[RMDB]
RNA sequence: GGGAACGACUCGAGUAGAGUCGAAAAUGAGCUUUCGAGCUCAGAAAUAUCAUGCCGAAACAUGACAAUGUCCUUUUUAAAUAAAAGGAGACUGCGUGUGGCCUAUUAGCACCGGCUUCGGCCGGUGGCUACAAAAUAGUUUCGACUAUUUUGUAGCAAAAGAAACAACAACAACAAC
Reactivity to DMS in 0.01 (KOAc 150mM, MgCl2 10mM, bicine 150mM(pH8.5), 24C), signal-to-noise 4, nucleotides 027 to 126: u000g010a020g010c010u010u000u020c170g020a030g020c000u010c000a020g010a090a100a130u010a070u000c080a100u000g010c020c020g010a150a150a090c010a000u000g010a130c040a000a040u000g000u010c000c000u030u010u000u000u000a090a130a170u010a030a000a000a010g000g000a020g000a030c070u000g000c000g010u000g010u000g000g030c020c290u010a060u010u010a120g010c020a010c000c000g000g010c010u000u000c180g000g020c010c000g010g020u000g000
Reactivity to 2A3 in 0.01 (KOAc 150mM, MgCl2 10mM, bicine 150mM(pH8.5), 24C), signal-to-noise 5, nucleotides 027 to 126: u020g010a000g000c020u090u100u170c220g100a020g000c000u000c000a000g050a010a100a000u220a050u100c140a070u120g030c030c030g130a190a120a010c010a010u030g220a140c020a040a060u060g090u080c000c000u030u030u000u050u150a300a300a280u220a040a030a020a000g020g000a010g050a010c010u010g000c010g010u010g020u040g010g020c020c010u210a220u300u230a080g060c000a000c030c000g010g040c040u040u030c130g120g000c020c010g000g010u010g030
The data come from the RNA Mapping Database (RMDB), library RFMREP. An RNA of 177 nucleotides, treated with DMS and 2A3 and read out base by base. Values cover nucleotides 27 to 126. For DMS the reverse transcriptase was MarathonRT. For 2A3 the reverse transcriptase was SuperScript II with manganese. For 2A3, 4,201 sequencing reads were counted.